[RMDB]
RNA sequence: GGGAACGACUCGAGUAGAGUCGAAAAACCUUAUUUUGAGAAGCUUAGGGAUUUGGCCCAUAGAAGCUUCAGCAACCGACUUUAAAUAGCACGGUGCUAAUACCAACGAGCAACUCGAAUGAUAAGUAAAACGUUGACAAGUUCGCUUGUCAACGAAUCUUGUCUUGUAGUUCGCUACAAGACAAGAAAAAGAAACAACAACAACAAC
Reactivity to DMS in 0.01 (KOAc 150mM, MgCl2 10mM, bicine 150mM(pH8.5), 24C), signal-to-noise 1, nucleotides 027 to 156: a190c070c010u020u010a050u030u020u020u000g000a080g040a040a300g000c020u000u000a030g050g010g000a210u000u000u000g010g000c000c000c010a200u000a130g000a080a040g000c020u000u000c030a030g060c010a020a000c000c010g020a110c000u010u000u020a120a120a170u010a020g010c010a020c010g000g000u010g020c000u000a100a080u000a060c000c020a060a150c150g000a060g000c020a040a240c060u010c000g020a040a000u010g010a100u010a040a080g000u000a070a060a070a150c000g010u010u000g020a020c000a010a000g010u000u000c260g020c000u000u000g060u010c000a010a000c000g010a030a070
Reactivity to 2A3 in 0.01 (KOAc 150mM, MgCl2 10mM, bicine 150mM(pH8.5), 24C), signal-to-noise 3, nucleotides 027 to 156: a000c050c000u100u060a160u040u100u080u100g070a050g000a060a000g000c040u080u070a040g030g000g030a130u080u050u180g070g000c030c000c000a040u060a080g140a040a000g000c000u040u020c020a000g000c000a000a000c000c000g040a010c000u070u100u240a120a220a300u130a140g010c020a020c030g000g020u000g000c000u020a050a010u030a070c030c030a050a070c020g040a010g020c050a040a090c050u030c040g050a090a070u070g050a030u070a070a050g030u080a010a090a030a020c000g000u000u000g000a010c000a000a000g000u020u040c110g050c190u000u000g000u000c010a000a000c000g010a000a030

Chemical mapping of a 207-nucleotide RNA with DMS and 2A3. The data come from the RNA Mapping Database (RMDB), library M2RFPK. Values cover nucleotides 27 to 156. The reactions ran in a buffer of 150 mM KOAc, 10 mM MgCl2 and 150 mM bicine (pH 8.5), at 24 C. For 2A3 the reverse transcriptase was SuperScript II with manganese.